Notes: This 177-nucleotide RNA was probed chemically with 2A3 and DMS.
RNA sequence: GGGAACGACUCGAGUAGAGUCGAAAAGCGAUUGGCGCGGCUGUUAUCGCCCAAGCCGGUACCGCGAUGCUGUGCUAUGUAACCCCGAAAGAGCAUCUGGGUCUGCCAGACCGCAAGGACGUCAAGAAGUAGCAGUAGUGUUCGCACUACUGCUACUAAAAGAAACAACAACAACAAC
Reactivity to 2A3 in 0.01 (KOAc 150mM, MgCl2 10mM, bicine 150mM(pH8.5), 24C), signal-to-noise 2, nucleotides 027 to 126: g080c040g080a080u050u130g030g000c070g000c030g030g000c010u080g040u200u110a090u120c030g030c010c040c030a000a000g010c040c000g000g010u060a060c010c020g040c030g030a030u100g000c010u000g050u040g010c030u090a040u180g110u180a130a120c000c000c000c000g080a100a090a050g090a040g030c030a030u000c020u040g000g000g020u030c040u020g080c020c010a020g000a030c020c010g000c000a010a020g050g000a050c020g050u040c010a020a050g080a090
Reactivity to DMS in 0.01 (KOAc 150mM, MgCl2 10mM, bicine 150mM(pH8.5), 24C), signal-to-noise 4, nucleotides 027 to 126: g020c080g010a100u000u000g010g010c060g030c060g000g010c040u010g000u000u000a090u000c100g000c030c040c060a080a100g010c070c020g010g020u010a090c090c060g000c080g020a030u010g010c000u000g030u010g010c060u010a060u010g010u000a130a100c050c020c010c040g020a050a080a090g000a060g000c040a060u010c030u000g010g020g000u000c080u000g010c060c040a080g000a080c070c040g020c080a060a100g010g000a070c090g020u010c090a070a100g000a170

Conditions: 150 mM KOAc, 10 mM MgCl2 and 150 mM bicine (pH 8.5), 24 C. Source: RMDB library OK2TST, as collected in RNAgym. DMS adducts were read by reverse transcription with MarathonRT. Values cover nucleotides 27 to 126.